[RMDB]
RNA sequence: GGGAACGACUCGAGUAGAGUCGAAAAUAUAUCAUAAGUGGUCCAAGGCCCGGCCAUUUGGCAGCCGUAGAAUGACUAUGUUAAUGGAAUUGGUCUCAGUCCAGGUCUUAGUCGACAGGUGCUCAUACUGAAUAGUAUCGUUCGCGAUACUAUUCAGAAAAGAAACAACAACAACAAC
Reactivity to 2A3 in 0.01 (KOAc 150mM, MgCl2 10mM, bicine 150mM(pH8.5), 24C), signal-to-noise 2, nucleotides 027 to 126: u060a000u030a010u030c020a030u040a270a030g060u020g050g000u020c060c030a060a090g100g000c040c000c000g040g030c000c030a050u120u020u040g040g010c010a020g130c010c070g010u020a020g090a170a090u100g020a020c010u000a010u110g060u110u210a080a050u030g030g070a040a120u050u070g070g010u040c050u010c140a020g040u010c010c010a010g060g000u040c000u030u040a030g020u040c010g020a010c010a000g010g050u030g030c020u000c030a050u150a150
Reactivity to DMS in 0.01 (KOAc 150mM, MgCl2 10mM, bicine 150mM(pH8.5), 24C), signal-to-noise 4, nucleotides 027 to 126: u010a120u000a090u020c060a090u000a080a090g010u000g000g000u010c010c060a140a170g020g000c030c050c100g000g010c010c010a130u010u000u010g010g010c030a090g000c030c020g020u010a060g000a130a060u000g000a030c020u000a040u000g000u000u000a150a090u000g010g010a050a070u010u000g010g010u000c080u010c060a130g010u010c020c010a040g000g010u000c020u000u000a050g000u000c020g010a090c060a090g000g010u000g000c050u000c100a110u000a140

An RNA of 177 nucleotides, treated with 2A3 and DMS and read out base by base. Reactivities are given for positions 27 through 126. The reactions ran in a buffer of 150 mM KOAc, 10 mM MgCl2 and 150 mM bicine (pH 8.5), at 24 C. Source: RMDB library OK2TST, as collected in RNAgym.